[RMDB]
RNA sequence: GGGAACGACUCGAGUAGAGUCGAAAACAAACCGCACAACCACGAGCACACCACCAAGACCCACCACACAUACCCAUGUUGUAGCCUAUAUAAGAAAAACCAACUCUACGAGAAGAGCUCCGUCAGGAGCGUCAGGGCCAUUCGUGGCCCUGACGCUAAAAGAAACAACAACAACAAC
Reactivity to DMS in 0.01 (KOAc 150mM, MgCl2 10mM, bicine 150mM(pH8.5), 24C), signal-to-noise 1, nucleotides 027 to 126: c020a080a130a030c130c060g060c100a070c080a030a090c060c010a070c030g010a140g010c040a060c100a080c050c070a020c090c110a070a020g030a050c050c010c000a040c040c110a070c050a050c050a070u000a020c040c050c040a130u000g010u000u010g000u010a060g010c100c020u000a100u000a070u000a050a060g030a020a040a070a050a100c060c060a040a030c000u000c000u000a030c030g000a210g000a000a000g020a210g030c060u000c010c000g000u010c120a100g010g010